[RMDB]
RNA sequence: GGGAACGACUCGAGUAGAGUCGAAAAGAUAUGGACUCCAGGUAGGGAGCUUAGUCGGAAACGACAGGAGCGAGGAUCUACCGGAGUCCUAAGUCAAAACGUCUCAUCGGUUCGCCGAUGAGACGAAGUUACAUUAACCGUUCGCGGUUAAUGUAACAAAAGAAACAACAACAACAAC
Reactivity to DMS in 0.01 (KOAc 150mM, MgCl2 10mM, bicine 150mM(pH8.5), 24C), signal-to-noise 4, nucleotides 027 to 126: g000a040u010a300u000g000g000a010c000u000c010c000a140g040g010u000a010g010g010g000a070g030c000u000u000a070g010u010c000g000g000a120a090a160c000g000a010c010a070g010g000a010g020c000g000a090g030g000a050u010c000u000a010c000c000g020g010a010g000u000c000c000u000a000a060g010u000c040a070a090a110a140c030g000u000c000u000c000a000u000c000g000g010u000u010c240g020c010c010g010a010u000g010a000g000a000c000g000a000a040
Reactivity to 2A3 in 0.01 (KOAc 150mM, MgCl2 10mM, bicine 150mM(pH8.5), 24C), signal-to-noise 4, nucleotides 027 to 126: g020a020u070a050u130g010g000a010c010u020c040c060a080g040g000u010a010g020g040g030a020g000c010u030u030a020g010u000c000g010g050a070a050a080c020g030a000c030a040g300g090a010g010c010g030a230g010g040a050u020c000u000a000c000c000g000g000a000g000u010c000c000u000a000a000g000u000c010a010a020a060a100c020g000u010c010u000c000a000u000c000g040g060u070u040c230g060c100c000g000a010u000g000a000g010a000c000g000a000a010